[RMDB]
Source: RMDB library OK2TRN, as collected in RNAgym. An RNA of 177 nucleotides, treated with DMS and 2A3 and read out base by base. For 2A3, 10,535 sequencing reads were counted. For DMS the reverse transcriptase was MarathonRT. The RNA was probed in 150 mM KOAc, 10 mM MgCl2 and 150 mM bicine (pH 8.5) at 24 C. 2A3 is a SHAPE reagent: it acylates the 2'-hydroxyl of flexible nucleotides of all four kinds.
RNA sequence: GGGAACGACUCGAGUAGAGUCGAAAACAGGCCUUCGGUGUAGACCUCCAGGGAAGGCAGCACCAUGUCGUGCGCGUAGUCGCGUAACGCUGCACGGAGAUCGGUUGGGUUUUCGUGCAUUUGCAGACAUACGGUCAAGUUUCGACUUGACCGUAUGAAAAGAAACAACAACAACAAC
Reactivity to DMS in 0.01 (KOAc 150mM, MgCl2 10mM, bicine 150mM(pH8.5), 24C), signal-to-noise 6, nucleotides 027 to 126: c160a100g000g010c010c030u000u000c050g020g020u010g020u010a100g020a250c070c020u000c030c060a160g010g020g010a060a030g010g010c030a260g020c070a090c070c050a120u010g010u000c030g030u010g000c010g010c020g010u000a120g000u010c070g010c020g020u000a050a070c060g010c100u000g000c000a010c000g000g000a010g000a010u000c010g010g020u010u010g010g010g010u000u000u000u000c000g010u000g000c000a030u000u010u000g010c070a150g000a210
Reactivity to 2A3 in 0.01 (KOAc 150mM, MgCl2 10mM, bicine 150mM(pH8.5), 24C), signal-to-noise 6, nucleotides 027 to 126: c030a020g080g080c010c020u080u090c070g030g020u070g050u080a130g090a300c010c020u020c060c070a080g080g040g060a030a010g020g000c000a000g030c010a020c020c020a080u120g050u120c010g020u040g000c010g000c020g060u130a080g160u170c010g000c000g050u050a170a030c020g010c040u020g000c000a000c020g010g000a000g000a000u040c060g240g210u150u170g170g000g010u030u000u010u010c010g000u000g000c020a060u110u090u140g000c030a010g020a120